[RMDB]
RNA sequence: GGGAACGACUCGAGUAGAGUCGAAAAGAUAUGGAGAGGGACAUGAAAGCCCUUCGGAAACGAAGGACUUUCAACAGCCCUUCUCCUAAGUCAAAGGCCAGGUAAUUGUUCGCAAUUACCUGGCCAAUCUUAACAUUCACUUCGGUGAAUGUUAAGAAAAAGAAACAACAACAACAAC
Reactivity to DMS in 0.01 (KOAc 150mM, MgCl2 10mM, bicine 150mM(pH8.5), 24C), signal-to-noise 3, nucleotides 027 to 126: g000a020u010a300u010g010g000a010g020a030g000g000g010a020c030a300u010g000a020a000a000g000c010c000c000u000u010c000g010g000a090a090a170c010g020a020a000g020g010a010c000u000u010u000c000a020a060c260a140g010c010c000c000u000u000c000u000c000c000u010a020a080g000u000c020a100a100a150g000g000c000c010a010g010g010u000a000a000u000u000g000u000u020c250g010c010a000a000u000u000a000c000c000u000g000g010c010c000a000a000

Conditions: 150 mM KOAc, 10 mM MgCl2 and 150 mM bicine (pH 8.5), 24 C.
Chemical mapping of a 177-nucleotide RNA with DMS.
It was measured as part of the RMDB library TTRDEL.
Reactivities are given for positions 27 through 126.
DMS adducts were read by reverse transcription with MarathonRT.